[RMDB]
RNA sequence: GGGAACGACUCGAGUAGAGUCGAAAAGGGCAUAUAGGAGUGGGAGAGACCAUCAGCAUCUUUACCGAGUCCGAGAGCAUCUUCUGUAUGUGACUUGUUAUAAGAUGCAGACAAACAGAAGCAAGAGGGAACAACAUCCCGAGGUGAGGCUCGGGGAGGGAGCAUUAGGAUUCGUCCUAAUGCUCCCAAAAGAAACAACAACAACAAC
Reactivity to 2A3 in 0.01 (KOAc 150mM, MgCl2 10mM, bicine 150mM(pH8.5), 24C), signal-to-noise 1, nucleotides 027 to 156: g050g030g000c070a030u090a020u150a250g160g000a150g070u200g040g050g010a130g000a000g010a070c000c050a080u040c050a010g010c000a000u030c000u010u000u000a030c080c000g000a000g000u000c000c010g010a010g000a000g160c130a060u060c020u190u020c020u040g160u170a180u080g030u150g010a000c010u080u000g000u010u080a150u010a200a020g000a000u040g000c000a000g060a010c020a000a140a000c020a010g050a120a010g060c010a060a000g070a040g050g000g010a070a030c040a060a020c000a130u050c040c020c000g000a000g020g020u100g050a030g040g000c020u020c000g000g000g000g010a050

This 207-nucleotide RNA was probed chemically with 2A3. 2A3 adducts were read by reverse transcription with SuperScript II with manganese. Values cover nucleotides 27 to 156.